[RMDB]
RNA sequence: GGGAACGACUCGAGUAGAGUCGAAAACGCUAUAGAUUCGUCUAUAGCGACUCCUACCCGCCGGCCGGUGGGCGCGGUAGGUGACGCAAACCACCGUGCGAAAUGUACUGGUUUUCGAACCAGUAAACUAAUGUGCCUUGUUCGCAAGGCACAUUAGAAAAGAAACAACAACAACAAC
Reactivity to 2A3 in 0.01 (KOAc 150mM, MgCl2 10mM, bicine 150mM(pH8.5), 24C), signal-to-noise 2, nucleotides 027 to 126: c000g010c000u000a000u010a000g000a010u030u030c130g020u000c090u010a000u010a000g010c000g000a010c000u000c000c000u000a010c000c000c000g000c010c000g120g000c000c000g010g000u000g000g020g000c000g010c080g010g010u030a030g000g030u010g110a060c110g020c150a100a060a040c060c000a000c020c010g050u100g000c000g030a080a070a040u200g030u050a010c030u010g020g000u050u010u020u110c230g010a020a000c000c000a000g000u030a000a000a060
Reactivity to DMS in 0.01 (KOAc 150mM, MgCl2 10mM, bicine 150mM(pH8.5), 24C), signal-to-noise 2, nucleotides 027 to 126: c040g010c000u000a000u000a010g000a030u010u000c210g000u000c010u010a000u000a000g020c000g000a200c080u000c000c010u000a020c010c010c010g010c020c000g020g020c030c000g000g000u000g020g000g040c000g000c110g010g020u010a000g010g010u000g000a050c190g010c140a050a060a110c080c010a030c020c000g010u020g020c000g020a090a080a080u020g020u010a020c010u000g000g010u000u000u020u020c200g000a020a010c000c000a010g000u010a010a030a180